Chemical mapping of a 207-nucleotide RNA with 2A3 and DMS.

[RMDB]
RNA sequence: GGGAACGACUCGAGUAGAGUCGAAAAAGAUCCACGCUACGGCGUGGAUCACACGUUCAUCACUAUUGGGACGGAAGUAGGCAUAGUGCCGAAGGAACGCAUUAGUCAUGCGCUACGGCGCAUGACACACAUCAGAGUCACUUCGGUGACUCUGAAAGAAUGUAUAACCCUUCGGGGUUAUACAUUCAAAAGAAACAACAACAACAAC
Reactivity to 2A3 in 0.01 (KOAc 150mM, MgCl2 10mM, bicine 150mM(pH8.5), 24C), signal-to-noise 3, nucleotides 027 to 156: a000g000a010u000c000c000a000c020g000c010u030a030c250g110g000c010g000u000g010g000a000u000c000a000c000a000c010g020u030u020c030a140u050c030a100c140u190a230u170u270g030g010g020a000c020g040g040a080a000g040u080a020g040g010c050a060u100a230g070u160g090c000c010g030a020a010g090g040a070a010c090g020c140a140u080u200a060g000u000c010a000u010g000c000g000c020u020a040c270g110g000c000g000c010a000u000g000a000c000a010c000a000c000a050u030c010a000g000a000g000u000c000a010c010u040u100c160g080g000u000g000a000c000u000c000u010g000a000a000a010
Reactivity to DMS in 0.01 (KOAc 150mM, MgCl2 10mM, bicine 150mM(pH8.5), 24C), signal-to-noise 1, nucleotides 027 to 156: a050g000a000u000c000c010a030c010g010c040u010a060c300g080g040c000g040u000g000g010a000u010c010a080c020a040c010g010u000u000c060a200u000c070a110c020u010a110u000u010g000g060g020a090c020g000g000a080a120g020u010a110g020g000c090a100u000a120g000u000g040c030c010g000a110a170g000g010a030a120c050g000c090a070u000u020a110g010u000c010a060u010g010c030g000c020u000a090c170g060g000c080g000c010a010u000g000a020c000a040c040a050c080a090u010c000a010g000a000g000u000c010a050c000u000u000c300g020g010u010g000a010c030u010c000u000g010a000a040a180
Record summary:
Conditions: 150 mM KOAc, 10 mM MgCl2 and 150 mM bicine (pH 8.5), 24 C. For 2A3, 1,974 sequencing reads were counted. For DMS, 1,765 sequencing reads were counted.